[RMDB]
RNA sequence: GGGAACGACUCGAGUAGAGUCGAAAACUGCUGCAUCAAAAACGCGAUCGAUGAGUGGAACACCGAAUCCAUAGGUUUUGCCCAUGCCUGUCCGUGCUUGGCCGAUCAGGUCACGGCCAUCCAAAGCGAGUAGCUUAGUCUUCGGACUAAGCUACUCAAAAGAAACAACAACAACAAC
Reactivity to DMS in 0.01 (KOAc 150mM, MgCl2 10mM, bicine 150mM(pH8.5), 24C), signal-to-noise 2, nucleotides 027 to 126: c010u000g000c060u020g010c010a050u000c100a040a090a060a150a150c060g000c040g060a060u000c100g030a050u010g000a140g000u010g010g000a090a050c050a100c080c040g030a150a080u000c030c060a050u000a070g000g000u000u000u000u020g000c000c000c010a120u010g010c030c040u000g010u010c040c070g020u000g000c050u000u000g000g020c050c010g000a110u010c090a060g000g010u000c090a140c010g000g000c020c000a030u020c030c040a070a060a090g000c180
Reactivity to 2A3 in 0.01 (KOAc 150mM, MgCl2 10mM, bicine 150mM(pH8.5), 24C), signal-to-noise 1, nucleotides 027 to 126: c010u000g000c020u050g000c000a040u000c000a040a020a080a130a080c060g010c040g050a000u050c010g040a040u050g000a020g000u040g030g000a010a030c070a050c080c000g080a060a070u080c030c020a040u070a040g070g050u000u050u060u060g010c040c050c010a030u080g000c010c000u060g030u070c000c000g000u030g070c030u050u110g030g030c000c000g090a150u220c060a080g030g050u030c030a000c030g010g040c010c020a000u000c020c030a050a010a120g110c040
Structure probing data (DMS and 2A3) for a 177-nucleotide construct. It was measured as part of the RMDB library OK2TRN. The DMS profile rests on 1,249 reads. Values cover nucleotides 27 to 126.